This 207-nucleotide RNA was probed chemically with DMS and 2A3.
2A3 adducts were read by reverse transcription with SuperScript II with manganese.
The DMS profile rests on 3,892 reads.
The reactions ran in a buffer of 150 mM KOAc, 10 mM MgCl2 and 150 mM bicine (pH 8.5), at 24 C.
For DMS the reverse transcriptase was MarathonRT.

RNA sequence: GGGAACGACUCGAGUAGAGUCGAAAAGGUGUCAUUCGCGCGUCAUCCCCGCGCACCCCCAGUCCCAUUAACAUAGCGGGCACAAUGGUGCAGGCACCGUCUGUAUACGUCUGCGGCUUCGUGGAGCGCCCGGACGCCCCACCCAAGGACGCCUGCCUAAUAGUCGUAAUUUCGAUUACGACUAUUAAAAAGAAACAACAACAACAAC
Reactivity to DMS in 0.01 (KOAc 150mM, MgCl2 10mM, bicine 150mM(pH8.5), 24C), signal-to-noise 2, nucleotides 027 to 156: g010g030u000g020u000c000a180u000u000c080g000c060g020c030g010u000c080a180u000c030c000c040c030g010c000g030c040a180c000c010c010c000c030a220g000u010c040c000c050a200u010u000a060a080c080a150u000a090g000c090g000g020g000c110a090c110a080a060u000g000g000u000g040c020a080g020g010c000a130c070c020g000u000c040u000g000u000a130u000a030c040g010u000c030u000g010c180g010g000c100u000u000c090g040u010g010g020a050g040c050g070c010c030c210g030g020a040c000g020c010c020c030c020a070c040c000c050a090a290g000g010a040c040g010c020c050u010g040c040c070
Reactivity to 2A3 in 0.01 (KOAc 150mM, MgCl2 10mM, bicine 150mM(pH8.5), 24C), signal-to-noise 2, nucleotides 027 to 156: g060g010u040g030u060c040a120u150u170c110g000c020g000c000g040u040c050a100u070c010c010c000c010g000c000g010c020a070c000c000c000c000c000a000g020u040c030c010c040a080u130u220a060a060c110a100u200a030g020c040g000g050g000c050a040c040a100a110u100g060g000u060g020c010a050g000g000c030a040c080c020g040u040c020u040g080u020a080u020a160c020g030u000c010u020g010c020g040g010c040u110u100c120g030u100g030g030a030g040c000g010c090c120c070g060g020a010c000g010c010c000c000c010a000c020c000c010a020a040g010g000a000c020g000c000c000u000g000c000c000